The data come from the RNA Mapping Database (RMDB), library OK3TST. The record gives the reactivity of an RNA of 207 nucleotides to DMS and 2A3. Reactivities are given for positions 27 through 156. For 2A3, 3,890 sequencing reads were counted. The RNA was probed in 150 mM KOAc, 10 mM MgCl2 and 150 mM bicine (pH 8.5) at 24 C.

[RMDB]
RNA sequence: GGGAACGACUCGAGUAGAGUCGAAAAGUUUCCGUGAGGAUUACACGGAGCGUCAAGAGGUUCAUCAGACUGGCACUAUGGAACACAAACAUUCCAUCGGUGAAAUGACAGACGAAGAUCUUGCAAAGGUUAUUGCGGGGGAGAAAUAACCUCGUGAAUCAAAUAGGAUCUUCGGAUCCUAUUUGAUAAAAGAAACAACAACAACAAC
Reactivity to DMS in 0.01 (KOAc 150mM, MgCl2 10mM, bicine 150mM(pH8.5), 24C), signal-to-noise 2, nucleotides 027 to 156: g000u010u000u000c090c000g000u000g000a070g020g040a240u000u000a120c020a030c050g000g010a080g030c060g020u000c060a050a110g000a040g010g000u000u010c030a070u000c020a130g010a150c030u010g000g020c000a010c010u000a090u010g010g000a060a070c070a210c080a220a130a210c130a170u000u000c000c000a000u000c080g000g050u000g000a060a050a130u000g000a110c070a140g030a050c010g020a070a060g010a070u000c010u000u000g040c090a080a040a100g010g010u000u000a050u010u010g010c000g000g000g000g010g000a130g010a080a040a070u000a030a040c000c010u010c000g010u000g030a190
Reactivity to 2A3 in 0.01 (KOAc 150mM, MgCl2 10mM, bicine 150mM(pH8.5), 24C), signal-to-noise 6, nucleotides 027 to 156: g040u040u190u000c000c020g000u020g010a070g190g050a240u140u170a080c010a000c010g000g000a010g040c010g050u070c030a050a040g020a040g080g050u080u070c040a090u030c030a050g090a120c040u040g030g040c010a010c020u020a010u010g010g010a020a010c040a010c050a270a280a020c030a060u020u000c010c000a020u040c100g000g010u030g020a060a050a060u120g030a040c000a040g020a020c020g040a050a020g020a070u020c010u060u050g000c030a100a050a070g080g010u110u070a060u090u090g030c030g050g000g000g010g000a070g140a030a120a030u060a020a020c000c000u020c020g030u050g050a030